[RMDB]
RNA sequence: GGGAACGACUCGAGUAGAGUCGAAAAACUAGGUGCACACACUGUUUUGGAAACUGGCAAUGCAGCAGGGAACAAAACAAUGUCCUGCCUUCACGGACCUUCUAGUCGGGGAUAAAGCCAAAUGCCUUAGCAGGGCCCAUCAUGAAAUGCAUGCCUAACCUGCACCUAAUUUCGAUUAGGUGCAGGUAAAAGAAACAACAACAACAAC
Reactivity to 2A3 in 0.01 (KOAc 150mM, MgCl2 10mM, bicine 150mM(pH8.5), 24C), signal-to-noise 1, nucleotides 027 to 156: a050c080u090a040g030g000u110g080c030a000c000a010c000a030c100u020g060u030u070u000u080g090g020a070a150a000c030u010g090g010c050a100a060u160g000c030a010g040c000a000g020g010g010a100a050c000a040a030a000a000c040a000a240u050g040u040c000c000u030g010c000c030u080u100c040a060c070g000g020a020c000c000u030u000c010u040a160g000u080c070g060g000g000g020a050u060a090a110a020g000c000c000a120a120a000u120g050c000c000u020u060a050g030c060a030g060g000g000c000c050c000a020u040c020a010u060g170a110a090a040u080g030c020a010u000g040c000c000u000a020